[RMDB]
RNA sequence: GGGAACGACUCGAGUAGAGUCGAAAAGGGGUCGAGACAUGGAAUGUUUAAAUGCCAUACUACCCACCGCUAACUGAAGCCUCCACGGUUAGCGAGGUAUGGCGGUAAACAUUCCAACAGCUCGACGGAGGCACCCAAACUCUUCUUCGGAAGAGAAUAUCCAUUGCGUAUUCGUACGCAAUGGAUAAAAAGAAACAACAACAACAAC
Reactivity to 2A3 in 0.01 (KOAc 150mM, MgCl2 10mM, bicine 150mM(pH8.5), 24C), signal-to-noise 3, nucleotides 027 to 156: g120g010g060g010u010c010g010a000g010a070c140a200u300g020g000a000a010u010g000u000u010u060a220a290a160u060g020c000c000a010u000a000c000u050a050c070c110c040a020c010c010g000c010u000a000a000c000u010g040a110a020g000c000c000u000c000c000a000c000g010g000u000u010a000g000c000g000a000g000g000u000a000u000g000g000c000g000g000u000a000a000a000c000a000u010u000c000c000a000a000c010a000g010c000u000c010g000a000c000g010g000a000g000g010c000a040c000c000c010a050a140a200c000u000c010u000u010c000u020u040c250g150g010a000a000g010a000g050a010a020
Reactivity to DMS in 0.01 (KOAc 150mM, MgCl2 10mM, bicine 150mM(pH8.5), 24C), signal-to-noise 1, nucleotides 027 to 156: g000g030g070g040u000c000g050a000g020a060c030a240u000g020g000a000a000u000g030u010u000u000a020a140a060u000g030c000c010a040u000a060c010u000a040c030c010c000a300c050c010g030c000u000a000a020c000u000g000a010a120g010c020c010u000c000c020a300c050g000g000u000u000a000g030c000g000a000g010g010u000a010u000g040g020c000g000g010u000a070a070a010c010a040u000u000c000c000a010a010c020a140g000c010u000c000g010a040c000g000g000a100g100g060c050a160c000c000c010a060a080a180c000u000c000u000u000c000u000u010c190g050g010a030a020g000a040g060a060a210

The record gives the reactivity of an RNA of 207 nucleotides to 2A3 and DMS.
For 2A3, 3,070 sequencing reads were counted.
It was measured as part of the RMDB library RNAMAK.